[RMDB]
RNA sequence: GGGAACGACUCGAGUAGAGUCGAAAAGUGCGCGCCCGGAUGGAGAACAGCAGGCACUGGCUUUAGCGGGGAGCUGGCCCCACUGCUCCAGCCUCUCAGUCCAGCCCCAAGACGGAGGAGGGGGUUUCCCUCCCAGAGGGAGUGGAGAUGGAGGAAGCUAAAUAUAUCGUUUCGACGAUAUAUUUAGAAAAGAAACAACAACAACAAC
Reactivity to DMS in 0.01 (KOAc 150mM, MgCl2 10mM, bicine 150mM(pH8.5), 24C), signal-to-noise 2, nucleotides 027 to 156: g020u000g000c070g000c070g030c020c020c000g000g050a140u010g010g010a110g010a050a110c060a080g030c060a050g020g060c170a040c020u000g000g000c050u000u010u000a100g040c050g030g030g000g020a080g020c020u000g010g040c080c020c000c020a050c010u000g000c040u010c010c010a120g000c010c020u000c010u010c020a150g000u010c010c000a130g000c030c000c010c030a160a140g020a130c050g000g000a110g000g000a110g010g000g010g050g010u010u000u000c010c010c020u010c010c010c010a120g010a110g030g050g010a080g030u000g020g010a090g030a100u010g000g020a060g010g010a100a140g000
Reactivity to 2A3 in 0.01 (KOAc 150mM, MgCl2 10mM, bicine 150mM(pH8.5), 24C), signal-to-noise 2, nucleotides 027 to 156: g040u030g010c070g010c010g020c020c060c050g050g030a110u090g030g030a060g030a140a080c060a030g070c030a030g000g060c000a020c060u040g030g000c010u110u100u160a050g050c090g010g030g000g010a010g030c010u020g050g000c010c010c000c010a040c060u060g000c000u000c010c010a070g030c010c010u000c000u020c030a050g070u000c030c000a050g010c030c000c010c010a030a050g060a030c070g020g060a050g020g040a010g030g020g000g000g000u010u120u140c000c000c000u010c000c020c000a040g060a060g030g000g000a020g020u130g020g030a050g000a030u040g010g000a020g030g030a070a000g020

Background:
This 207-nucleotide RNA was probed chemically with DMS and 2A3. The RNA was probed in 150 mM KOAc, 10 mM MgCl2 and 150 mM bicine (pH 8.5) at 24 C. For DMS, 4,073 sequencing reads were counted.